[RMDB]
RNA sequence: GGGAACGACUCGAGUAGAGUCGAAAAACCUCUAAGUUCGCUUAGAGGUAAUGAACGCUGCAAAAAGCAGCGGGCUCAGCGGAGCACGCAAAAGCAACGCAAGAACACCAUUCUUCGGAAUGGUGAAACCAAAAUCCUAAUUCGUUAGGAUUUUGGUAAAAGAAACAACAACAACAAC
Reactivity to 2A3 in 0.01 (KOAc 150mM, MgCl2 10mM, bicine 150mM(pH8.5), 24C), signal-to-noise 5, nucleotides 027 to 126: a000c010c000u000c000u000a010a020g010u020u110c140g030c130u000u000a000g000a010g000g000u010a010a020u080g010a050a020c010g000c000u010g000c020a070a080a110a190a200g000c000a000g000c000g000g020g000c060u060c070a020g020c010g050g020a030g000c030a030c100g140c060a070a060a020a050g010c010a020a020c020g010c030a040a020g080a110a020c010a000c010c000a000u000u000c000u030u070c230g110g010a000a000u000g000g000u000g010a080a000
Reactivity to DMS in 0.01 (KOAc 150mM, MgCl2 10mM, bicine 150mM(pH8.5), 24C), signal-to-noise 6, nucleotides 027 to 126: a040c000c010u000c000u010a000a000g010u000u020c210g010c010u000u000a000g000a010g000g010u000a020a030u000g010a090a100c010g000c000u000g000c000a090a080a090a140a140g000c020a010g020c000g010g000g010c020u000c080a120g020c060g000g020a300g010c020a040c100g000c120a080a050a170a090g000c020a030a130c030g020c070a120a070g000a130a140c010a010c000c000a010u000u000c000u000u000c190g020g000a020a000u000g000g010u000g000a010a050